[RMDB]
RNA sequence: GGGAACGACUCGAGUAGAGUCGAAAAGUAAGAUGAUUCGUCAUCUUACGAACCCGAUGAAGCGGCACAUACCGAGCUUCAUACAUCUAACAGUGCAAAUAAUGGCGCGUGGUUUCGACCACGCGAAACUUCAUGACGUAUUCGUACGUCAUGAAGUAAAAGAAACAACAACAACAAC
Reactivity to DMS in 0.01 (KOAc 150mM, MgCl2 10mM, bicine 150mM(pH8.5), 24C), signal-to-noise 4, nucleotides 027 to 126: g000u000a010a000g010a010u000g000a030u000u010c200g020u010c000a000u000c000u000u000a010c000g000a060a160c010c000c000g000a040u010g000a020a020g030c000g010g020c060a070c130a090u000a100c100c070g010a170g010c020u000u000c000a000u000a130c120a050u000c110u020a120a090c120a080g000u000g010c090a110a100a070u010a090a070u000g010g000c000g020c000g040u000g010g000u000u000u010c190g000a030c000c000a010c000g010c000g000a010a030
Reactivity to 2A3 in 0.01 (KOAc 150mM, MgCl2 10mM, bicine 150mM(pH8.5), 24C), signal-to-noise 4, nucleotides 027 to 126: g000u010a000a000g000a000u000g010a000u010u110c140g060u000c080a000u000c000u000u010a000c000g010a010a030c010c000c000g010a030u040g000a000a010g000c020g060g010c080a050c010a190u240a130c080c080g050a050g040c020u000u010c000a010u030a060c060a090u080c040u110a070a090c030a090g060u050g110c060a080a070a100u210a100a110u220g250g000c000g000c020g000u020g010g000u010u040u080c180g050a010c000c000a000c000g000c000g000a010a000
Chemical mapping of a 177-nucleotide RNA with DMS and 2A3. Source: RMDB library M2PK50, as collected in RNAgym. Conditions: 150 mM KOAc, 10 mM MgCl2 and 150 mM bicine (pH 8.5), 24 C. DMS adducts were read by reverse transcription with MarathonRT. The DMS profile rests on 5,067 reads. Reactivities are given for positions 27 through 126. For 2A3 the reverse transcriptase was SuperScript II with manganese.